[RMDB]
RNA sequence: GGGAACGACUCGAGUAGAGUCGAAAAGAUAUGGAACUCGUUCUCUAGCGUGGCUGAUGACCUACAGAAUUUGUAGUCGGAAACGACUACUCAGGAUGUAGCAAGGCUCGGGACGAGUUCCUAAGUCCUCUUACGUUUUGUUCGCAAAACGUAAGAGAAAAGAAACAACAACAACAAC
Reactivity to DMS in 0.01 (KOAc 150mM, MgCl2 10mM, bicine 150mM(pH8.5), 24C), signal-to-noise 2, nucleotides 027 to 126: g000a070u020a300u000g000g010a010a010c000u000c010g010u000u000c000u030c140u010a130g070c200g000u040g030g040c050u000g030a070u000g000a080c300c000u000a020c020a000g010a300a250u000u000u000g020u000a020g020u000c010g040g000a070a070a260c000g000a020c000u000a000c000u010c030a000g000g000a300u000g000u000a000g000c010a040a110g000g000c000u090c050g010g000g020a040c020g000a060g050u000u040c000c010u020a030a130g000u000c040
Reactivity to 2A3 in 0.01 (KOAc 150mM, MgCl2 10mM, bicine 150mM(pH8.5), 24C), signal-to-noise 2, nucleotides 027 to 126: g070a040u140a100u240g000g010a000a000c000u010c010g100u180u090c120u060c100u120a120g090c110g270u300g150g000c060u090g080a300u150g040a190c010c000u000a000c020a020g030a040a050u000u020u050g010u020a010g010u000c010g020g030a070a090a070c010g030a000c000u000a000c010u000c000a000g010g030a030u010g010u010a010g000c030a160a300g080g000c030u000c080g000g000g000a000c000g020a010g000u000u000c000c010u000a000a000g010u000c000
The data come from the RNA Mapping Database (RMDB), library TTRINS.
Structure probing data (DMS and 2A3) for a 177-nucleotide construct.
For DMS the reverse transcriptase was MarathonRT.
Values cover nucleotides 27 to 126.